Structure probing data (2A3 and DMS) for a 177-nucleotide construct. DMS adducts were read by reverse transcription with MarathonRT. DMS (dimethyl sulfate) methylates the pairing face of unpaired adenines and cytosines. Values cover nucleotides 27 to 126. The data come from the RNA Mapping Database (RMDB), libraries RFM100 and RFMREP. 2A3 is a SHAPE reagent: it acylates the 2'-hydroxyl of flexible nucleotides of all four kinds.
RNA sequence: GGGAACGACUCGAGUAGAGUCGAAAAAGCACCGUACGCGGUGCAUUGUGUCUCUCCGUGUUCACAGCGGACCUUGAUUUAAUGUCUUACAAUUAAGGCACGCGGUGAAUGCCAAGAGAUUACCCAAAACCGGUAUUAGGUUCGCCUAAUACCGGUUAAAAGAAACAACAACAACAAC
Reactivity to 2A3 in 0.01 (KOAc 150mM, MgCl2 10mM, bicine 150mM(pH8.5), 24C), signal-to-noise 6, nucleotides 027 to 126: a000g000c000a000c010c000g020u050a040c270g020c010g100g000u000g010c010a000u010u160g050u030g010u010c000u000c000u010c030c020g010u010g000u010u000c000a000c000a010g010c000g010g000a050c000c000u010u020g020a050u030u030u100a150a100u180g160u160c110u070u100a060c120a050a000u010u010a000a000g000g000c040a030c030g000c000g000g000u000g000a000a000u010g010c000c000a030a000g000a000g000a000u020u100a100c010c000c000a040a120
Reactivity to DMS in 0.01 (KOAc 150mM, MgCl2 10mM, bicine 150mM(pH8.5), 24C), signal-to-noise 4, nucleotides 027 to 126: a100g000c000a000c010c010g050u010a090c240g030c020g070g020u000g020c000a010u000u030g010u020g000u000c010u000c000u000c120c300g020u000g000u000u000c000a010c000a030g020c000g000g000a130c000c000u000u000g000a010u000u000u010a050a040u030g010u060c150u000u000a080c300a010a010u000u010a020a000g000g010c300a010c010g010c000g000g020u000g000a020a000u000g000c020c070a100a000g000a000g000a020u000u010a100c000c000c000a060a050